[RMDB]
The data come from the RNA Mapping Database (RMDB), library OK2TST. The record gives the reactivity of an RNA of 177 nucleotides to 2A3 and DMS.
RNA sequence: GGGAACGACUCGAGUAGAGUCGAAAACUCUUGUCGGAUCUGAGAUGCUAACUCACUGCAACUGUUUUAGGACAAGAAUGAGGUGUAACAUCUUAAGAUAAAGUCUUAAGAUAAAGUCUUAAGAUAAUAAAGCGAUAUAUUUCGAUAUAUCGCUUUAAAAAGAAACAACAACAACAAC
Reactivity to 2A3 in 0.01 (KOAc 150mM, MgCl2 10mM, bicine 150mM(pH8.5), 24C), signal-to-noise 2, nucleotides 027 to 126: c030u000c050u020u080g120u070c080g070g080a070u030c000u030g020a010g010a020u010g040c020u050a030a060c000u000c070a040c030u090g010c010a080a050c050u010g150u050u030u020u090a130g000g050a030c020a040a040g040a070a090u050g020a010g030g020u090g020u030a040a020c000a000u000c000u010u020a120a010g030a040u020a050a040a040g020u000c000u000u020a010a000g010a000u060a130a190a030g010u000c000u000u010a010a000g010a010u040a100a070
Reactivity to DMS in 0.01 (KOAc 150mM, MgCl2 10mM, bicine 150mM(pH8.5), 24C), signal-to-noise 5, nucleotides 027 to 126: c020u000c030u000u000g020u010c090g020g010a070u000c030u000g010a030g020a030u000g000c020u010a100a130c070u000c020a040c070u000g010c130a090a190c110u000g000u000u000u010u020a140g010g000a030c020a030a080g000a080a070u010g020a050g010g020u000g010u000a040a060c030a010u000c000u000u000a030a060g010a040u000a070a060a180g010u000c000u000u000a020a020g010a040u000a050a070a180g000u000c000u000u000a010a010g010a020u000a060a140